This 177-nucleotide RNA was probed chemically with DMS and 2A3. DMS adducts were read by reverse transcription with MarathonRT. As a SHAPE reagent, 2A3 marks flexible, mostly unpaired nucleotides at the ribose 2'-OH. The reactions ran in a buffer of 150 mM KOAc, 10 mM MgCl2 and 150 mM bicine (pH 8.5), at 24 C.

RNA sequence: GGGAACGACUCGAGUAGAGUCGAAAAGGAUCCUCUCACAGGAUUGUCACUGUGUUCCGAAACUCCAACAGUAUUGCUUCGGGACACCUACAGCAAUACUGUAGGUAUAGUGAGUAGGAGAGGAUCGUAUGAGUGGUACCUUCGGGUACCACUCAUAAAAAGAAACAACAACAACAAC
Reactivity to DMS in 0.01 (KOAc 150mM, MgCl2 10mM, bicine 150mM(pH8.5), 24C), signal-to-noise 2, nucleotides 027 to 126: g000g000a010u000c000c000u000c000u000c030a070c070a190g020g010a110u000u000g030u000c050a070c010u000g040u010g030u000u000c000c010g010a040a030a030c030u000c150c140a100a160c130a150g000u020a210u020u000g010c070u000u010c150g010g000g000a050c150a050c000c000u010a070c030a030g030c020a120a170u010a300c000u000g010u010a000g010g000u000a060u000a040g010u000g000a010g000u000a080g010g010a040g010a040g020g000a000u000c000g010
Reactivity to 2A3 in 0.01 (KOAc 150mM, MgCl2 10mM, bicine 150mM(pH8.5), 24C), signal-to-noise 1, nucleotides 027 to 126: g100g000a000u000c020c000u020c010u000c030a190c020a170g200g130a260u130u070g170u090c010a030c000u010g000u000g000u040u000c000c010g010a000a020a020c100u110c030c050a080a080c060a150g130u140a240u140u190g070c030u040u030c010g000g010g010a010c000a020c050c000u030a000c030a000g070c040a050a140u100a290c010u000g000u000a000g000g000u010a100u060a150g050u060g020a010g000u100a060g050g030a010g010a000g000g000a000u010c000g000